An RNA of 177 nucleotides, treated with 2A3 and DMS and read out base by base. Values cover nucleotides 27 to 126. The data come from the RNA Mapping Database (RMDB), library 15KREP. For 2A3 the reverse transcriptase was SuperScript II with manganese.
RNA sequence: GGGAACGACUCGAGUAGAGUCGAAAAUAAUAUUCCCAUCGGGAACCUAUUACUGUGUCACCACUAAGGCUAAGUCCGUUCAACAAGAUCUUGACGUUAUUUUGCCUGGUGAGUUUUCCAAGAAGCACAUCAACAAGGGGUUCGCCCCUUGUUGAUGAAAAGAAACAACAACAACAAC
Reactivity to 2A3 in 0.01 (KOAc 150mM, MgCl2 10mM, bicine 150mM(pH8.5), 24C), signal-to-noise 1, nucleotides 027 to 126: u050a000a030u050a000u060u000c030c000c000a020u070c060g040g000g000a000a060c030c000u070a100u130u160a100c050u120g010u020g070u140c010a000c040c000a000c040u080a120a000g000g000c010u010a010a000g000u000c060c010g000u120u060c000a020a030c040a190a020g020a110u060c030u020u010g000a000c000g020u060u090a060u040u040u020u010g010c020c000u010g020g030u020g020a040g030u040u030u050u030c000c000a010a040g050a020a020g030c020a030
Reactivity to DMS in 0.01 (KOAc 150mM, MgCl2 10mM, bicine 150mM(pH8.5), 24C), signal-to-noise 1, nucleotides 027 to 126: u020a070a100u020a130u010u000c000c000c000a110u000c170g010g020g020a020a110c120c200u000a040u000u000a080c140u000g020u000g000u000c040a040c050c050a080c110u000a040a010g020g010c020u010a030a050g000u000c300c030g030u020u010c000a030a040c150a160a130g020a100u020c130u000u010g000a030c020g010u000u000a020u000u010u010u000g000c000c020u000g000g000u000g010a110g020u000u000u000u000c020c050a030a160g000a140a140g010c090a070